The record gives the reactivity of an RNA of 207 nucleotides to DMS and 2A3.

[RMDB]
RNA sequence: GGGAACGACUCGAGUAGAGUCGAAAAUUCGAGCAGACGGUCUACGAAAGCGCGCACGUAAUCUGAUUCUGUCUGCGCGAAGCCAGGGUACGAGACGAAGCGGUUCUCCGUGGCGCCGUAGCAAGGCUUGACGUAGACGGCUACCCCUGUGCAGGCACAGUGUAUGUCGGUUCGCCGACAUACACUGAAAAGAAACAACAACAACAAC
Reactivity to DMS in 0.01 (KOAc 150mM, MgCl2 10mM, bicine 150mM(pH8.5), 24C), signal-to-noise 2, nucleotides 027 to 156: u000u000c050g010a110g000c000a030g030a050c000g040g010u010c010u020a070c030g010a100a170a140g020c030g000c060g040c050a190c080g010u000a030a060u000c060u040g000a140u000u000c060u010g060u000c010u000g000c020g000c010g020a130a040g000c040c000a140g040g020g020u000a020c010g020a160g030a150c010g020a030a200g060c040g000g010u000u000c240u020c020c040g050u020g010g000c040g040c110c000g000u000a090g000c050a150a280g030g000c010u000u010g000a120c030g020u000a040g010a050c020g010g000c100u000a070c020c010c050c070u000g000u000g000c070a130g040g000c030a220
Reactivity to 2A3 in 0.01 (KOAc 150mM, MgCl2 10mM, bicine 150mM(pH8.5), 24C), signal-to-noise 2, nucleotides 027 to 156: u040u000c020g010a050g020c030a010g060a120c070g050g040u000c000u010a010c020g040a130a030a080g130c040g000c040g010c030a060c100g070u110a080a100u080c070u120g110a110u160u060c020u070g100u040c020u030g010c000g020c010g020a020a000g010c000c040a110g130g000g000u010a010c060g010a070g040a110c040g020a060a020g030c020g130g000u210u000c270u030c040c000g020u050g060g060c140g000c020c010g030u080a050g100c030a110a210g020g000c000u010u050g010a030c020g000u000a010g000a030c000g010g000c020u070a090c020c030c000c000u000g070u050g000c060a060g000g020c040a020

The RNA was probed in 150 mM KOAc, 10 mM MgCl2 and 150 mM bicine (pH 8.5) at 24 C. Reactivities are given for positions 27 through 156.